[RMDB]
RNA sequence: GGGAACGACUCGAGUAGAGUCGAAAAGAGCUAAUAUCUACUUCGUUUGUGCAUAUCACUAUAGGGAAGCUGAUGCGUUCAAGCGGUUGCGAGAAAUCGCAGUGCCUAGUGGAAUGAACGGCUCGAAGGGUUUUGAAUACUUCGGUAUUCAAAACCCAAAAGAAACAACAACAACAAC
Reactivity to 2A3 in 0.01 (KOAc 150mM, MgCl2 10mM, bicine 150mM(pH8.5), 24C), signal-to-noise 3, nucleotides 027 to 126: g010a010g010c040u070a030a040u050a170u140c030u030a000c000u030u060c000g070u020u000u020g030u000g010c010a030u020a010u120c000a000c020u020a030u150a300g070g080g100a040a000g040c090u020g000a020u000g000c010g000u010u010c010a010a000g010c000g010g020u040u000g010c000g020a020g040a040a070a030u000c000g000c010a000g000u030g090c000c020u030a040g000u010g020g020a020a020u040g010a070a020c120g010g000c000u000c000g020a060a050
Reactivity to DMS in 0.01 (KOAc 150mM, MgCl2 10mM, bicine 150mM(pH8.5), 24C), signal-to-noise 1, nucleotides 027 to 126: g040a040g000c020u000a140a160u020a120u020c000u000a030c020u000u060c070g000u000u000u000g000u000g000c000a040u020a030u000c000a000c030u040a190u030a090g070g020g030a050a000g040c040u000g000a000u000g000c030g080u000u020c030a030a000g070c020g020g020u030u000g000c000g040a010g000a220a020a210u000c010g000c000a070g000u000g000c140c190u000a000g110u000g000g000a070a140u000g040a020a090c100g000g010c070u000c020g020a050a020